[RMDB]
RNA sequence: GGGAACGACUCGAGUAGAGUCGAAAACCUCACUGAGAGGGAACAGAAGGAUAUUGCUUCCUUUUGCAGCAGUGUAAUAAAGUCAAUUAAAAACUUCCCAGGAUUUCUUUGGACCCAGGAAACAGCCAUCUUGCCCCGAAUUCGUUCGGGGCAAGAUAAAAGAAACAACAACAACAAC
Reactivity to 2A3 in 0.01 (KOAc 150mM, MgCl2 10mM, bicine 150mM(pH8.5), 24C), signal-to-noise 1, nucleotides 027 to 126: c000c000u000c000a040c020u020g000a010g070a090g150g100g040a060a060c000a000g030a020a000g010g040a000u040a160u200u300g070c010u070u140c000c000u000u150u000u000g030c070a060g020c030a060g020u050g010u190a000a100u180a300a090a000g140u120c090a000a150u210u220a090a000a000a000a100c050u120u150c010c010c000a000g020g020a040u000u060u100c010u000u080u240g150g000a030c000c000c000a000g000g030a070a220a000c010a020g080c100c020